The data come from the RNA Mapping Database (RMDB), library TTRINS. This 177-nucleotide RNA was probed chemically with DMS. The reactions ran in a buffer of 150 mM KOAc, 10 mM MgCl2 and 150 mM bicine (pH 8.5), at 24 C. Reactivities are given for positions 27 through 126.
[RMDB]
RNA sequence: GGGAACGACUCGAGUAGAGUCGAAAAGAUAUGGAGAACAUAAUCGUCCGACCUGAGGGAGCUCAGGUUCGGAAACGAACCGGGAGCGAGGAUCUCACAUGGUCGGACGAUUAUGUUCUCCUAAGUCCCUGUAGAUAUAGUUCGCUAUAUCUACAGGAAAAGAAACAACAACAACAAC
Reactivity to DMS in 0.01 (KOAc 150mM, MgCl2 10mM, bicine 150mM(pH8.5), 24C), signal-to-noise 3, nucleotides 027 to 126: g010a080u000a300u010g000g000a030g010a010a000c000a010u010a000a010u000c000g000u000c000c000g000a020c000c000u000g010a050g000g000g000a040g010c000u000c010a290g000g010u000u000c010g020g010a050a060a160c010g000a000a000c010c010g000g040g020a010g000c000g010a090g030g000a070u010c000u000c000a120c300a120u010g000g020u000c000g000g010a000c010g000a000u000u000a010u010g010u000u000c000u010c000c000u000a000a090g000u000c040